Conditions: 150 mM KOAc, 10 mM MgCl2 and 150 mM bicine (pH 8.5), 24 C. Chemical mapping of a 207-nucleotide RNA with 2A3 and DMS. For 2A3, 916 sequencing reads were counted. DMS (dimethyl sulfate) methylates the pairing face of unpaired adenines and cytosines. Source: RMDB library OK3TST, as collected in RNAgym. For DMS the reverse transcriptase was MarathonRT.
RNA sequence: GGGAACGACUCGAGUAGAGUCGAAAAUAACAGAUAAUAAAUGUAACUUAAAUCUGUUGGGUUGCUUUUUUCUGGCCUUAGUGAUUUCAAAGACUUGCUUGCAUGUGGUUAAAUUCACCAGUUAGUGACUUAUUCAUAUCUCUUUGCCCAUGUAGACACACUAUGCCUUAUUCGUAAGGCAUAGUGUAAAAGAAACAACAACAACAAC
Reactivity to 2A3 in 0.01 (KOAc 150mM, MgCl2 10mM, bicine 150mM(pH8.5), 24C), signal-to-noise 3, nucleotides 027 to 156: u070a020a010c000a010g050a020u140a160a060u100a150a280a060u190g040u060a010a050c020u050u090a070a050a200u030c030u090g050u070u010g080g050g000u020u020g000c020u090u080u020u020u120u030c020u080g020g000c000c000u040u030a040g020u070g120a080u050u130u190c110a030a000a040g040a070c010u040u060g020c020u050u020g040c020a000u040g030u040g060g000u070u100a110a120a080u230u040c080a050c050c000a080g000u040u030a020g000u060g090a060c030u080u060a030u130u090c080a030u040a100u100c070u000c030u050u040u070g000c010c000c010a010u100g040u080a030g070a020c060
Reactivity to DMS in 0.01 (KOAc 150mM, MgCl2 10mM, bicine 150mM(pH8.5), 24C), signal-to-noise 1, nucleotides 027 to 156: u030a090a050c030a030g030a070u010a140a170u000a050a110a150u010g000u010a090a140c110u000u000a070a210a070u000c020u000g000u000u000g010g030g040u000u000g050c010u000u000u010u000u000u000c030u010g040g000c000c010u000u000a110g010u000g010a170u010u000u010c080a040a040a120g000a050c030u000u000g020c020u000u000g020c030a060u010g030u020g020g000u000u000a040a060a060u000u010c040a080c040c040a080g030u000u010a100g000u000g010a050c160u010u000a060u000u010c040a070u000a090u000c000u000c070u000u000u000g000c020c030c020a100u000g010u000a060g020a110c080